[RMDB]
RNA sequence: GGGAACGACUCGAGUAGAGUCGAAAACUCAGUACUCUUACUCUUUCCUAUAAAGAGGAGACUGCUGGACUCGCCGCCCGAGCCCGAGCAUGGGCCCCAGUUCCGAACGAAGAGACCGCCGGGGAAGAUACCUGUGCGUUCGCGCACAGGAAAAGAAACAACAACAACAAC
Reactivity to DMS in 0.01 (KOAc 150mM, MgCl2 10mM, bicine 150mM(pH8.5), 24C), signal-to-noise 4, nucleotides 027 to 129: c110u060c010a020g000u010a030c140u020c020u000u000a210c050u070c010u020u050u010c190c110u010a100u070a110a010a000g010a060g080g000a000g030a040c100u020g090c050u050g020g010a110c080u100c090g040c000c110g060c000c020c060g000a170g010c040c000c040g030a180g030c160a150u040g040g000g060c040c000c070c010a110g020u010u040c050c000g070a090a090c080g000a070a050g010a090g020a100c090c120g030c040c020g000g000g000g000a000a000g040a110u030a110
Reactivity to 2A3 in 0.01 (KOAc 150mM, MgCl2 10mM, bicine 150mM(pH8.5), 24C), signal-to-noise 3, nucleotides 027 to 129: c000u010c000a020g010u030a020c010u000c010u050u040a300c000u090c000u100u070u020c050c020u190a170u170a170a080a000g030a040g030g020a000g010a050c030u030g040c030u030g000g020a020c020u020c130g020c000c000g010c000c020c020g020a000g010c030c000c010g010a030g000c060a080u080g010g020g000c000c010c000c010a020g020u100u020c010c010g020a020a010c010g020a050a060g040a010g010a080c000c050g020c010c000g000g000g000g000a040a000g020a020u060a030